An RNA of 177 nucleotides, treated with DMS and read out base by base. The reactions ran in a buffer of 150 mM KOAc, 10 mM MgCl2 and 150 mM bicine (pH 8.5), at 24 C. The DMS profile rests on 638 reads. Values cover nucleotides 27 to 126. It was measured as part of the RMDB library M2PK90.
[RMDB]
RNA sequence: GGGAACGACUCGAGUAGAGUCGAAAAUACAAGUACGAAAGUACAAGCCUUAUCAGUUGGGCCUUCUGGUCAAAUUAGCGCUCACCCAGGAGGUCCUUCGCAUGACGUCGACAAGCGCUAAAAGAAAUCCUAGCUAGAGUUUCGACUCUAGCUAGGAAAAAGAAACAACAACAACAAC
Reactivity to DMS in 0.01 (KOAc 150mM, MgCl2 10mM, bicine 150mM(pH8.5), 24C), signal-to-noise 1, nucleotides 027 to 126: u000a090c100a120a220g020u000a010c020g000a190a050a200g000u000a020c030a110a220g040c000c020u000u000a060u000c090a170g020u000u020g000g000g000c010c010u000u000c000u000g020g000u000c050a050a090a150u000u000a030g030c010g000c020u000c050a180c300c000c010a000g000g000a000g000g000u000c000c040u000u000c070g020c110a090u000g000a010c110g060u000c140g020a100c280a090a010g000c000g060c010u000a000a000a050a140g000a050a080a080